[RMDB]
RNA sequence: GGGAACGACUCGAGUAGAGUCGAAAAGCAGUUCACAGACUAAACGGCGAUGGGCUUGGUGGCCUCCGUCGAGGUAAGCCGAGCUUAAGAUAUAGUCGGGCCCUCGGGAAACCGAGGGGGUAUUCGCAGAUGCUUUCACCGUUCCGUAGGUGAACCUCUAUGCACGUAUCUUCGGAUACGUGCAUAGAAAAGAAACAACAACAACAAC
Reactivity to 2A3 in 0.01 (KOAc 150mM, MgCl2 10mM, bicine 150mM(pH8.5), 24C), signal-to-noise 2, nucleotides 027 to 156: g040c050a040g020u100u070c010a030c000a040g070a030c030u060a030a040a090c040g040g000c020g070a060u100g010g030g000c010u020u000g020g000u030g040g050c020c000u000c030c070g300u300c190g010a000g000g030u050a200a010g000c000c000g020a000g010c000u070u050a070a000g040a050u100a020u040a120g060u110c000g020g050g010c010c000c010u000c000g030g000g030a080a010a010c000c000g000a000g000g000g000g000g020u060a150u070u150c020g000c040a010g040a180u060g080c010u000u010u110c020a020c000c010g000u060u040c030c030g030u060a030g000g020u000g010a010a000c000c000u000